[RMDB]
Background: This 207-nucleotide RNA was probed chemically with DMS and 2A3.
RNA sequence: GGGAACGACUCGAGUAGAGUCGAAAAGGGGUCUCGCUUCGAGAGCUGUAUGUGGCUUGGAUUUAUGGGACUGAAGCCUCCACGGUCCCAUUGUCAGCCACGAAGGCUCUAAGACAGAGCGAGACGGAGGCACCCAAAAUCCGACUUCGGUCGGAAAGAAUGAUAUCUACUUCGGUAGAUAUCAUUCAAAAGAAACAACAACAACAAC
Reactivity to DMS in 0.01 (KOAc 150mM, MgCl2 10mM, bicine 150mM(pH8.5), 24C), signal-to-noise 2, nucleotides 027 to 156: g050g020g020g000u000c000u000c010g000c010u000u000c010g030a070g010a010g020c000u000g000u000a110u010g030u010g000g010c000u000u030g030g030a040u010u010u000a000u000g000g020g040a040c010u000g020a060a110g020c010c000u000c020c020a300c070g000g020u020c040c010c000a020u000u000g010u000c020a070g000c010c000a020c000g000a150a280g000g020c000u000c000u010a130a140g000a140c300a050g000a040g010c010g000a050g010a000c010g000g020a020g030g060c020a040c010c010c030a020a070a100a100u000c000c000g010a050c010u010u000c300g040g000u000c000g010g000a000a020a130
Reactivity to 2A3 in 0.01 (KOAc 150mM, MgCl2 10mM, bicine 150mM(pH8.5), 24C), signal-to-noise 4, nucleotides 027 to 156: g100g010g040g010u000c000u000c000g000c010u010u060c020g020a010g010a000g000c170u200g110u170a160u280g010u040g030g000c040u150u300g130g010a030u160u220u110a010u080g000g000g020a000c000u020g020a040a010g000c000c000u000c010c010a020c020g020g000u010c000c000c010a000u000u020g010u020c070a000g000c000c000a010c010g000a050a010g010g000c000u010c000u010a030a010g000a010c020a000g030a000g000c000g000a000g000a000c000g000g000a000g000g000c000a030c000c010c000a010a120a030a070u000c000c000g000a000c000u060u090c300g070g000u000c010g000g010a010a010a010
The reactions ran in a buffer of 150 mM KOAc, 10 mM MgCl2 and 150 mM bicine (pH 8.5), at 24 C. It was measured as part of the RMDB library RNAMAK. For DMS, 3,567 sequencing reads were counted. DMS adducts were read by reverse transcription with MarathonRT.